Conditions: 150 mM KOAc, 10 mM MgCl2 and 150 mM bicine (pH 8.5), 24 C. Structure probing data (2A3) for a 207-nucleotide construct.

[RMDB]
RNA sequence: GGGAACGACUCGAGUAGAGUCGAAAAAAAAUAAGGAUAAAGCAAGAAAACAAACAUUCCGUGCUUGGGGCAGGGACAGGCUGGGAACACUGGGUCUGGUAUGGGGGGCACAGACCAAGCACGUACUUCCUGCCCCAUAGCUGCAGUUCAGAAGCUCCAUGUAGUUCGUAUUCGUACGAACUACAUGAAAAGAAACAACAACAACAAC
Reactivity to 2A3 in 0.01 (KOAc 150mM, MgCl2 10mM, bicine 150mM(pH8.5), 24C), signal-to-noise 1, nucleotides 027 to 156: a010a010a010a010u200a000a090g010g050a080u170a160a080a070g040c070a070a190g060a130a130a020a000c100a010a130a040c040a060u150u120c120c070g030u010g020c010u000u000g000g000g010g000c030a000g000g000g010a000c010a020g040g080c000u070g050g020g070a090a020c060a010c150u050g070g000g050u020c000u030g000g020u230a250u110g010g000g010g000g150g000c040a060c000a050g010a000c000c000a010a000g060c020a020c150g040u060a000c020u030u020c030c010u030g000c120c150c000c000a000u050a000g000c010u110g000c030a070g030u140u000c000a000g000a110a030g010c020u050c050